[RMDB]
RNA sequence: GGGAACGACUCGAGUAGAGUCGAAAAGUCUGUCUUUGGUGCCAGCCGCGACGCCAAGACCAAGCCGCUGAUUCUCGGGGCUGCAAAAACGAAUAUCGGACACUUAGAAGGUGCUGCUGGUAUUGCAGGGCUGAUGCUCCUUCGGGAGCAUCAGCCCAAAAGAAACAACAACAACAAC
Reactivity to 2A3 in 0.01 (KOAc 150mM, MgCl2 10mM, bicine 150mM(pH8.5), 24C), signal-to-noise 1, nucleotides 027 to 126: g060u000c000u000g000u000c040u000u270u040g000g010u020g000c000c000a010g030c030c000g190c030g070a020c000g090c000c010a020a000g000a000c050c000a070a000g000c010c000g090c180u050g080a030u240u000c030u010c000g030g000g000g010c000u000g040c060a030a030a010a030a030c020g080a010a000u020a000u000c000g030g020a000c000a000c000u100u030a030g100a300a180g170g000u060g030c000u120g060c000u000g020g000u000a000u000u020g020c070a000
Structure probing data (2A3) for a 177-nucleotide construct. The data come from the RNA Mapping Database (RMDB), library OK1LIB. The RNA was probed in 150 mM KOAc, 10 mM MgCl2 and 150 mM bicine (pH 8.5) at 24 C. The 2A3 profile rests on 444 reads.